The record gives the reactivity of an RNA of 177 nucleotides to DMS and 2A3. For 2A3, 678 sequencing reads were counted. Values cover nucleotides 27 to 126. The data come from the RNA Mapping Database (RMDB), library OK2TRN. Conditions: 150 mM KOAc, 10 mM MgCl2 and 150 mM bicine (pH 8.5), 24 C. For 2A3 the reverse transcriptase was SuperScript II with manganese.

RNA sequence: GGGAACGACUCGAGUAGAGUCGAAAAUGGUUCUUCCUUUCAAAGCGAUACUUUGGCGCUUCUAACCCGCAUCCGGGAUGAAAUAGGAUGCCGCUACGUAACGCAUACCUAUCGUGGUCGCGUAGGAACGCACGCACGUAUUCGUACGUGCGUGCGUAAAAGAAACAACAACAACAAC
Reactivity to DMS in 0.01 (KOAc 150mM, MgCl2 10mM, bicine 150mM(pH8.5), 24C), signal-to-noise 1, nucleotides 027 to 126: u010g010g010u000u020c010u000u000c030c030u000u000u000c150a080a060a080g030c030g000a190u000a150c090u000u010u000g010g030c030g000c090u010u000c050u020a110a120c030c010c010g020c190a060u010c100c060g000g000g010a190u000g010a060a010a060u000a110g020g000a000u000g000c050c160g010c020u000a000c300g000u000a040a090c080g000c020a140u020a170c100c040u000a050u010c080g000u020g000g000u000c080g010c030g020u000a070g040g010a130
Reactivity to 2A3 in 0.01 (KOAc 150mM, MgCl2 10mM, bicine 150mM(pH8.5), 24C), signal-to-noise 1, nucleotides 027 to 126: u090g010g000u070u030c000u070u180c040c000u000u220u160c140a120a100a000g010c000g030a050u000a110c080u170u080u120g110g000c000g000c000u120u000c000u010a030a150c000c030c000g000c010a110u080c070c030g080g020g060a110u090g230a070a080a030u090a030g020g000a020u000g040c040c020g000c020u050a030c030g090u050a080a000c000g020c050a040u100a120c000c020u040a050u150c100g050u000g090g120u120c040g020c000g000u000a010g050g000a020